The record gives the reactivity of an RNA of 177 nucleotides to 2A3 and DMS. For 2A3, 32,132 sequencing reads were counted. The reactions ran in a buffer of 150 mM KOAc, 10 mM MgCl2 and 150 mM bicine (pH 8.5), at 24 C. Reactivities are given for positions 27 through 126.
[RMDB]
RNA sequence: GGGAACGACUCGAGUAGAGUCGAAAAUCUGAGAUUGUGCGGCUGUCAGCGUCGCCAAUUGCUGUGCAGUACAUGAUGCGCGAGUUGAACCUCAUGCAAGACAAGGAGCUCUCAGUGUUCAGCCUGCACAGGCUGUAAAAUUCGUUUUACAGCCUGUAAAAGAAACAACAACAACAAC
Reactivity to 2A3 in 0.01 (KOAc 150mM, MgCl2 10mM, bicine 150mM(pH8.5), 24C), signal-to-noise 9, nucleotides 027 to 126: u040c020u030g020a010g020a070u080u080g050u150g100c030g020g000c030u040g110u250c070a040g050c050g060u050c040g030c030c010a010a030u060u110g010c030u040g050u100g020c020a010g020u050a050c030a090u080g020a040u040g060c020g000c020g010a010g010u050u110g110a050a040c010c000u020c020a030u080g020c030a050a060g050a190c020a040a080g080g000a040g040c010u010c000u000c030a020g010u010g020u080u030c020a040g050c010c010u020g010c020
Reactivity to DMS in 0.01 (KOAc 150mM, MgCl2 10mM, bicine 150mM(pH8.5), 24C), signal-to-noise 9, nucleotides 027 to 126: u010c020u000g010a080g000a060u000u010g020u010g030c010g010g010c000u000g010u000c120a070g010c090g010u000c110g010c100c130a040a030u010u000g010c040u000g010u010g010c030a030g010u000a070c070a140u000g000a070u000g000c020g020c050g000a040g010u000u010g010a090a190c190c010u000c040a040u000g010c040a050a050g000a110c060a050a080g000g000a200g000c030u000c020u000c020a040g010u000g010u000u000c110a100g010c080c010u000g010c140